[RMDB]
RNA sequence: GGGAACGACUCGAGUAGAGUCGAAAAGAUAUGGACUGUUAGAAACACAUACAUACUCCGAUAAGCUGGUGUCGGAAACGACACACAGCUUUUGACGGAGUGUAUGUGUUUCUAACAGUCCUAAGUCGAUUAUGUAGAUGUUCGCAUCUACAUAAUCAAAAGAAACAACAACAACAAC
Reactivity to DMS in 0.01 (KOAc 150mM, MgCl2 10mM, bicine 150mM(pH8.5), 24C), signal-to-noise 7, nucleotides 027 to 126: g010a100u010a300u000g010g010a010c000u000g000u010u000a010g010a010a010a010c000a000c000a010u000a000c000a120u010a200c040u000c010c000g020a180u000a020a010g030c000u000g000g020u000g020u000c000g000g000a110a070a180c000g020a010c000a010c000a110c010a000g000c000u000u000u000u000g010a210c130g010g010a020g030u000g000u000a000u000g010u000g010u000u000u000c000u000a000a000c000a000g000u000c000c000u000a010a060g000u000c110